[RMDB]
RNA sequence: GGGAACGACUCGAGUAGAGUCGAAAAAAAGACGCGGUUGCCGAUCGGUAUGGAUGCCACCGUGACGGCUCAAUCACACAAGUGCCAACGAUAACGAGGCGCUCGCUCUUGCUGCGUAACUGACGGCUAGAUACAGCCAGGUUCGCCUGGCUGUAAACUAGGCAGAUCAGUUCGCUGAUCUGCCUAGAAAAGAAACAACAACAACAAC
Reactivity to DMS in 0.01 (KOAc 150mM, MgCl2 10mM, bicine 150mM(pH8.5), 24C), signal-to-noise 1, nucleotides 027 to 156: a060a100a000g010a080c060g020c030g000g010u020u000g020c010c040g020a120u010c030g050g000u060a110u030g030g030a190u010g020c040c000a060c050c040g020u000g000a080c050g030g020c030u000c110a040a160u010c030a120c050a110c070a090a050g020u000g020c030c020a040a150c040g000a160u000a070a060c060g000a180g040g010c020g000c060u000c060g040c040u010c080u000u000g010c000u000g010c030g030u020a050a070c080u000g010a090c100g000g020c040u000a110g000a300u000a000c000a010g020c010c010a020g000g030u010u010c300g020c010c000u000g020g000c000u010g010u000a000a090a090
Reactivity to 2A3 in 0.01 (KOAc 150mM, MgCl2 10mM, bicine 150mM(pH8.5), 24C), signal-to-noise 2, nucleotides 027 to 156: a000a000a000g080a020c060g020c040g040g020u050u140g000c020c010g030a080u020c010g010g040u070a090u090g090g040a070u100g010c010c010a030c000c000g020u010g050a090c050g030g000c010u030c090a020a030u070c030a030c020a010c000a090a060g010u040g000c010c010a070a060c100g080a070u060a250a060c090g000a040g020g010c000g000c010u040c020g030c000u000c030u030u020g020c020u020g000c010g020u050a070a040c020u050g040a030c030g000g010c020u000a000g000a090u040a020c000a000g000c050c000a000g000g010u020u050c140g020c030c000u000g000g140c000u000g010u010a000a000a020
The record gives the reactivity of an RNA of 207 nucleotides to DMS and 2A3. For 2A3, 1,287 sequencing reads were counted. 2A3 adducts were read by reverse transcription with SuperScript II with manganese. Source: RMDB library M2RFPK, as collected in RNAgym.